This 207-nucleotide RNA was probed chemically with 2A3 and DMS. For DMS, 3,701 sequencing reads were counted. It was measured as part of the RMDB library OK3TST. The reactions ran in a buffer of 150 mM KOAc, 10 mM MgCl2 and 150 mM bicine (pH 8.5), at 24 C. For 2A3 the reverse transcriptase was SuperScript II with manganese. In probing experiments dimethyl sulfate is read out at A N1 and C N3, which are open when not base-paired. Reactivities are given for positions 27 through 156.
RNA sequence: GGGAACGACUCGAGUAGAGUCGAAAAGGUAUGACACCAUUUGAAAUCGCUCAGUUGUAUGGUUCGUGUAUAACACCUAAUGUGUGUUUUAUUAAAGGUGAUGUGAUAAAAGUGACUCAGUUGUUAGGUGCUGAGUACUUGGUUAACCCAGCCAAUGGGUUGAGAGAGUAUUCGUACUCUCUCAACCAAAAGAAACAACAACAACAAC
Reactivity to 2A3 in 0.01 (KOAc 150mM, MgCl2 10mM, bicine 150mM(pH8.5), 24C), signal-to-noise 2, nucleotides 027 to 156: g050g000u060a030u070g040a020c010a040c030c060a100u090u050u030g050a010a050a050u070c050g000c020u000c090a010g030u050u080g020u070a050u030g000g000u040u010c030g010u040g010u000a050u010a050a000c000a020c020c000u080a100a060u030g070u000g000u000g020u020u000u010u080a090u020u070a070a050a000g080g000u040g020a070u000g020u030g030a020u110a040a080a030a000g050u050g110a150c000u000c020a030g000u040u040g080u130u180a110g070g040u050g010c010u000g000a000g040u020a040c010u020u030g040g010u090u020a060a050c010c000c050a050g040c000c020a020a010u050g060
Reactivity to DMS in 0.01 (KOAc 150mM, MgCl2 10mM, bicine 150mM(pH8.5), 24C), signal-to-noise 2, nucleotides 027 to 156: g000g030u010a020u000g000a130c030a100c020c020a120u000u010u000g030a010a070a070u000c020g000c020u000c040a110g010u010u010g010u000a050u010g010g020u000u010c030g010u000g030u010a050u000a030a030c030a050c000c010u000a040a100u010g040u020g030u000g010u000u000u000u000a020u000u000a050a040a060g010g040u010g000a080u010g050u020g010a100u000a070a000a040a070g020u010g020a110c020u000c010a030g020u000u010g020u000u010a160g040g010u000g020c010u000g000a010g030u010a070c060u010u000g010g030u000u000a080a140c020c010c000a250g000c010c050a040a130u010g020